[RMDB]
RNA sequence: GGGAACGACUCGAGUAGAGUCGAAAACGUUCUGAGCCUACAGUCGACAACGGCAUCUCCCUGACGGGAGGUGGUCGUAGUUGAUGAUUAAUCCGGGACCGCGUGAGGCAGUAACCUGAGCAGCGAAAACGGAUAGCUGCGGGCGGCAGACGGAUCGCAAAGUCAGUGAGUUCGCUCACUGACUUUGAAAAGAAACAACAACAACAAC
Reactivity to DMS in 0.01 (KOAc 150mM, MgCl2 10mM, bicine 150mM(pH8.5), 24C), signal-to-noise 2, nucleotides 027 to 156: c050g000u020u010c030u000g060a180g010c020c010u010a040c010a090g020u000c030g010a030c000a190a030c000g000g010c010a040u000c000u020c010c020c010u000g010a300c300g020g010g020a010g020g030u020g020g030u000c000g050u010a070g040u000u000g010a110u020g030a100u000u010a090a030u000c020c020g020g000g010a220c030c010g020c010g030u000g000a120g000g070c030a150g010u000a100a140c040c000u030g000a160g020c000a100g050c000g010a040a010a080a250c060g010g020a050u000a130g000c020u000g010c020g000g000g010c000g000g020c040a020g000a080c020g010g020a070u010c050g000
Reactivity to 2A3 in 0.01 (KOAc 150mM, MgCl2 10mM, bicine 150mM(pH8.5), 24C), signal-to-noise 3, nucleotides 027 to 156: c030g040u150u060c010u020g010a000g000c010c010u020a020c030a060g020u020c010g000a000c010a030a010c020g010g000c010a010u000c000u010c010c000c060u120g260a070c150g000g000g000a010g010g000u010g010g140u090c010g000u020a040g000u000u010g030a110u040g020a040u060u170a080a030u000c010c020g000g010g060a050c010c020g040c030g060u090g060a040g010g050c050a050g090u150a030a060c020c030u020g080a060g080c030a010g000c060g040a050a030a010a010c000g010g000a010u030a020g000c020u050g000c010g010g000g000c000g010g070c000a000g000a010c030g000g030a070u120c020g000